[RMDB]
RNA sequence: GGGAACGACUCGAGUAGAGUCGAAAAGUCAGAAUUUAUAAACCAUGGCUAACAGCACAUCAGCUUUCAUUGCCGAAGUAUGUCGUCAGAGAAGAUACACCUAAUACGCUAAUUAAUGAGGAUUUGGCGUACUACAUGCGUUCGCGCAUGUAGUACGAAAAGAAACAACAACAACAAC
Reactivity to 2A3 in 0.01 (KOAc 150mM, MgCl2 10mM, bicine 150mM(pH8.5), 24C), signal-to-noise 4, nucleotides 027 to 126: g030u040c030a000g070a210a080u080u190u090a210u170a080a060a010c040c000a060u060g020g010c010u030a080a010c030a080g010c030a050c030a080u090c050a000g010c000u070u110u100c050a100u020u160g010c010c010g040a040a020g020u040a110u090g090u040c050g040u080c040a020g020a000g020a280a000g040a040u060a120c030a090c010c000u040a070a060u130a090c080g020c070u060a070a080u150u070a080a110u180g070a020g140g000a050u060u020u100g090g000
Reactivity to DMS in 0.01 (KOAc 150mM, MgCl2 10mM, bicine 150mM(pH8.5), 24C), signal-to-noise 3, nucleotides 027 to 126: g000u020c080a080g010a100a080u070u010u000a060u010a140a110a150c060c040a090u010g010g040c050u000a060a100c100a030g000c080a010c110a090u040c090a080g010c040u010u000u000c080a070u020u030g030c040c000g000a070a090g000u000a070u010g000u000c070g020u030c050a110g000a090g000a090a060g000a050u000a050c070a080c050c020u000a070a070u030a030c080g010c060u010a020a070u040u000a050a050u010g010a070g000g000a100u020u000u000g020g000

This 177-nucleotide RNA was probed chemically with 2A3 and DMS. DMS adducts were read by reverse transcription with MarathonRT. 2A3 adducts were read by reverse transcription with SuperScript II with manganese. For DMS, 3,454 sequencing reads were counted. It was measured as part of the RMDB library OK1LIB. Conditions: 150 mM KOAc, 10 mM MgCl2 and 150 mM bicine (pH 8.5), 24 C.